This 177-nucleotide RNA was probed chemically with 2A3. 2A3 adducts were read by reverse transcription with SuperScript II with manganese. For 2A3, 504 sequencing reads were counted. It was measured as part of the RMDB library OK1LIB. Values cover nucleotides 27 to 126. Reactivities are rounded to 0.1 and cut off at 0 and 3. The RNA was probed in 150 mM KOAc, 10 mM MgCl2 and 150 mM bicine (pH 8.5) at 24 C.
RNA sequence: GGGAACGACUCGAGUAGAGUCGAAAAUUGCCAAUUCCAAAUACUGUGAGUGAUUUAUCGCCUAAAGGAAUUGCGUUGCGUCUCGAUUUAAUUGGUGCAACUGGGACAGCGAUUUUAUUAACAGUAAAUGAGCGAAAGGGUUCGCCCUUUCGCUCAUAAAAGAAACAACAACAACAAC
Reactivity to 2A3 in 0.01 (KOAc 150mM, MgCl2 10mM, bicine 150mM(pH8.5), 24C), signal-to-noise 1, nucleotides 027 to 126: u230u080g090c140c000a080a250u020u010c000c000a020a020a000u180a060c000u010g050u020g070a000g060u120g010a000u090u100u000a190u080c010g000c000c000u180a190a000a000g020g030a000a120u180u000g030c070g000u000u000g040c060g120u000c060u040c040g010a130u000u300u000a000a050u120u100g070g000u000g040c000a000a000c020u020g050g040g050a000c000a010g110c000g000a000u030u040u040u040a120u050u050a010a000c000a020g010u050a210a000